Source: RMDB library OK2TRN, as collected in RNAgym. An RNA of 177 nucleotides, treated with DMS and 2A3 and read out base by base. The reactions ran in a buffer of 150 mM KOAc, 10 mM MgCl2 and 150 mM bicine (pH 8.5), at 24 C. For 2A3, 153,919 sequencing reads were counted.
RNA sequence: GGGAACGACUCGAGUAGAGUCGAAAAGGGACGAGUUGGAUUUUUUCCGUGAGAACGGAAGAGGUCUAGCUCAAUGGCGUGCUCCUAGAACUUCGGGAAGAAAUGAGUUCCGAACAGUACGCCAUGACUACUUCGUAGUAUUCGUACUAUGGAGUAGAAAAGAAACAACAACAACAAC
Reactivity to DMS in 0.01 (KOAc 150mM, MgCl2 10mM, bicine 150mM(pH8.5), 24C), signal-to-noise 9, nucleotides 027 to 126: g000g010g020a120c170g000a010g010u000u000g010g000a000u000u000u000u000u000u000c000c000g010u000g010a260g000a200a010c000g010g000a020a010g000a000g000g010u000c000u000a010g010c000u000c000a090a020u000g000g010c010g020u000g000c010u000c060c060u000a090g000a060a060c080u000u000c070g010g010g010a100a090g010a090a110a120u010g010a090g010u000u000c000c020g010a050a050c250a030g010u000a010c000g010c010c010a010u000g000a250
Reactivity to 2A3 in 0.01 (KOAc 150mM, MgCl2 10mM, bicine 150mM(pH8.5), 24C), signal-to-noise 9, nucleotides 027 to 126: g060g010g050a020c050g000a010g000u010u000g010g000a000u000u000u000u000u000u000c000c000g000u010g020a080g010a030a000c000g000g000a000a000g000a000g000g000u000c000u000a000g000c000u000c010a010a010u000g000g000c000g000u000g000c000u000c020c030u030a040g020a060a020c020u060u050c040g030g020g050a070a050g070a060a200a110u240g030a060g050u020u000c010c000g010a040a010c010a010g000u000a000c000g000c010c000a000u020g020a010